[RMDB]
Background
The record gives the reactivity of an RNA of 207 nucleotides to 2A3. Values cover nucleotides 27 to 156.
RNA sequence: GGGAACGACUCGAGUAGAGUCGAAAAAGCUGGUCAGUAUACGUACUGAGCAGCAAGGGGUUGAAGCGGACACCCCUUCAGGCGCGCGCCCAAGCUCCGUACGCCGCCUCAUACGUGAGGCGGCGAAAUAGGUGUAUCUGGUUCGCCAGAUACACAACUACAUUGAACGGUUCGCCGUUCAAUGUAGAAAAGAAACAACAACAACAAC
Reactivity to 2A3 in 0.01 (KOAc 150mM, MgCl2 10mM, bicine 150mM(pH8.5), 24C), signal-to-noise 2, nucleotides 027 to 156: a000g000c020u010g020g180u000c000a000g000u030a020u000a090c150g040u000a020c010u010g020a020g050c000a010g000c010a000a000g030g000g000g000u050u100g190a240a020g020c000g010g000a000c000a000c000c000c000c000u050u160c060a020g020g010c000g000c040g030c020g010c120c000c010a000a010g060c150u020c000c000g000u010a040c000g020c000c000g000c050c000u000c020a050u050a120c280g050u060g040a000g000g000c030g000g000c000g000a000a000a000u080a010g050g070u000g000u000a010u010c000u000g010g020u050u060c160g060c080c000a000g000a010u010a000c010a000c000a000a000